[RMDB]
RNA sequence: GGGAACGACUCGAGUAGAGUCGAAAAAGCGUGAUGCUCCGCACCUACCCGGAUCUGCAGUGGCCACCCGAGUUUCUCGCUGCUGCGGACGCGUGCGCUGCCAGUGUGGAGCCGCUGCAGGAGGCGCAGCCUGGAGGGACUUCGGUCCCUCCAGGCUAAAAGAAACAACAACAACAAC
Reactivity to 2A3 in 0.01 (KOAc 150mM, MgCl2 10mM, bicine 150mM(pH8.5), 24C), signal-to-noise 2, nucleotides 027 to 126: a000g060c080g020u060g040a040u130g010c040u000c030c020g000c010a020c000c000u130a140c000c000c000g120g000a160u060c000u030g010c000a000g000u000g020g000c030c030a120c050c070c020g060a090g050u050u070u000c120u040c020g020c040u040g020c000u050g000c040g000g040a070c050g010c020g110u080g000c060g000c060u020g080c030c030a050g040u090g050u140g080g020a050g000c010c000g070c020u080g020c010a030g060g020a000g000g040c030g000c020
Reactivity to DMS in 0.01 (KOAc 150mM, MgCl2 10mM, bicine 150mM(pH8.5), 24C), signal-to-noise 1, nucleotides 027 to 126: a090g010c080g040u000g020a060u010g070c000u000c010c000g020c000a030c070c100u000a300c060c000c000g060g000a080u040c010u000g000c070a000g000u000g040g000c000c110a190c080c060c010g010a140g060u030u030u030c000u000c060g000c000u000g070c080u000g000c090g000g010a000c170g000c090g000u030g050c060g010c040u040g020c000c160a170g060u030g000u000g020g000a220g040c000c030g000c020u010g010c050a090g000g000a050g000g000c090g000c060